[RMDB]
RNA sequence: GGGAACGACUCGAGUAGAGUCGAAAAGGCGUGGAUGCCCCCUCUCAAGAUUUCGGUGAUCACUGGGACAGUAUUCUUACAGACAUUGAAACAACAGCGACUCGGUAUGAUAAUGACGGAUGGAAAUCACUGGCGCUUCAUCCGGGGCAUAUCACCCUACUCAUUCCAGAUUCGUCUGGAAUGAGUAAAAAGAAACAACAACAACAAC
Reactivity to 2A3 in 0.01 (KOAc 150mM, MgCl2 10mM, bicine 150mM(pH8.5), 24C), signal-to-noise 4, nucleotides 027 to 156: g030g020c100g030u010g010g040a030u060g020c010c000c020c020c000u060c020u030c050a150a150g020a170u020u060u050c020g010g010u030g040a080u020c030a020c070u050g010g000g040a020c000a070g050u090a140u150u060c050u020u090a080c030a020g030a020c020a040u040u100g040a060a040a020c060a030a020c010a030g110c000g080a040c010u030c100g020g010u120a070u120g040a050u040a180a030u140g060a040c050g030g000a010u020g020g060a050a100a030u080c010a030c050u020g060g000c040g000c000u030u040c020a020u010c020c020g000g000g030g000c010a010u040a040u050c010a010c010c010c000
Reactivity to DMS in 0.01 (KOAc 150mM, MgCl2 10mM, bicine 150mM(pH8.5), 24C), signal-to-noise 2, nucleotides 027 to 156: g000g000c090g010u010g020g000a090u000g030c000c030c020c020c050u000c070u020c060a110a160g010a190u000u000u000c090g020g020u000g000a020u010c090a100c040u030g000g000g040a110c010a030g020u000a300u000u000c020u030u000a230c030a130g010a090c080a070u000u000g020a080a040a090c030a060a090c030a060g010c020g000a050c030u000c070g020g020u020a060u020g000a140u000a040a090u010g000a110c040g000g000a050u000g030g000a040a110a070u000c030a110c090u000g030g010c080g030c110u010u010c000a030u010c060c010g020g000g040g040c010a060u000a090u000c000a040c010c020c020